An RNA of 177 nucleotides, treated with 2A3 and DMS and read out base by base. The RNA was probed in 150 mM KOAc, 10 mM MgCl2 and 150 mM bicine (pH 8.5) at 24 C. The 2A3 profile rests on 19,126 reads. Reactivities are given for positions 27 through 126. Source: RMDB library OK2TST, as collected in RNAgym.
[RMDB]
RNA sequence: GGGAACGACUCGAGUAGAGUCGAAAAGCGCGUUUACCUGAUCCGACAGCCAUGUGUGUGGCGACCGUGGACGCCAACGGCCAGCCCUAUCAGCGGAUAGUGCUGUUAAAACAUUAUGACGACCAGGCAUAGUGACUGAUUUCGAUCAGUCACUAUGAAAAGAAACAACAACAACAAC
Reactivity to 2A3 in 0.01 (KOAc 150mM, MgCl2 10mM, bicine 150mM(pH8.5), 24C), signal-to-noise 9, nucleotides 027 to 126: g040c040g000c030g020u030u100u090a060c010c010u030g020a050u030c030c020g060a040c060a020g000c020c030a110u130g150u030g050u030g020u020g170g000c010g010a030c020c020g090u080g050g040a020c030g010c010c000a030a010c020g020g000c020c010a010g010c030c020c010u020a030u010c020a030g300c130g290g010a020u020a010g040u030g010c010u000g010u030u060a050a100a020a010c040a050u120u150a090u250g050a020c040g020a030c020c030a020g020g030
Reactivity to DMS in 0.01 (KOAc 150mM, MgCl2 10mM, bicine 150mM(pH8.5), 24C), signal-to-noise 9, nucleotides 027 to 126: g010c100g010c040g010u000u000u010a110c020c020u000g010a070u000c020c030g010a130c150a120g020c030c040a060u000g020u010g020u010g030u000g010g010c020g010a050c060c070g010u000g010g010a080c040g010c030c030a110a070c060g000g010c110c010a060g010c010c040c020u000a030u000c030a180g020c160g000g000a060u000a030g010u010g010c010u000g010u000u010a050a070a080a100c090a060u000u010a070u010g010a170c170g000a090c030c030a060g000g000